[RMDB]
RNA sequence: GGGAACGACUCGAGUAGAGUCGAAAAGGCUCAGGAAACUGAGCCAAGAAUGCUCAGAGAAAAGAACUAGUGACUGGGCAGAACAGAAUAAAAGUACACUAGAAAAUAGGAGCAGGAAACUGCUCCACCUACGCCAUAUAUUCGUAUAUGGCGUAGGAAAAGAAACAACAACAACAAC
Reactivity to 2A3 in 0.01 (KOAc 150mM, MgCl2 10mM, bicine 150mM(pH8.5), 24C), signal-to-noise 5, nucleotides 027 to 126: g000g000c000u010c000a000g000g020a010a070a100c010u000g000a000g000c000c000a000a010g000a070a040u050g000c000u000c010a000g050a000g040a050a170a090a040g110a130a080c010u000a020g010u010g060a040c000u010g000g030g000c010a010g020a100a030c040a020g160a130a060u240a140a120a020a000g120u100a060c010a000c020u020a000g110a070a120a020a010u170a090g000g000a000g020c000a000g010g000a050a050a000c000u000g000c000u000c000c000a000
Reactivity to DMS in 0.01 (KOAc 150mM, MgCl2 10mM, bicine 150mM(pH8.5), 24C), signal-to-noise 3, nucleotides 027 to 126: g020g000c000u000c000a020g000g000a070a150a270c000u000g020a000g000c000c020a010a020g000a170a070u010g000c000u000c000a000g010a300g020a040a060a110a170g000a080a130c000u000a010g000u010g000a210c050u000g010g000g000c000a020g000a250a150c090a120g060a110a070u020a030a020a100a160g010u030a120c000a000c000u000a000g010a130a100a060a030u040a090g000g000a000g000c030a000g030g000a070a080a160c000u000g000c000u000c000c000a000
Structure probing data (2A3 and DMS) for a 177-nucleotide construct.
For 2A3, 8,989 sequencing reads were counted.
Source: RMDB library OK1LIB, as collected in RNAgym.
The reactions ran in a buffer of 150 mM KOAc, 10 mM MgCl2 and 150 mM bicine (pH 8.5), at 24 C.
Reactivities are given for positions 27 through 126.
For DMS the reverse transcriptase was MarathonRT.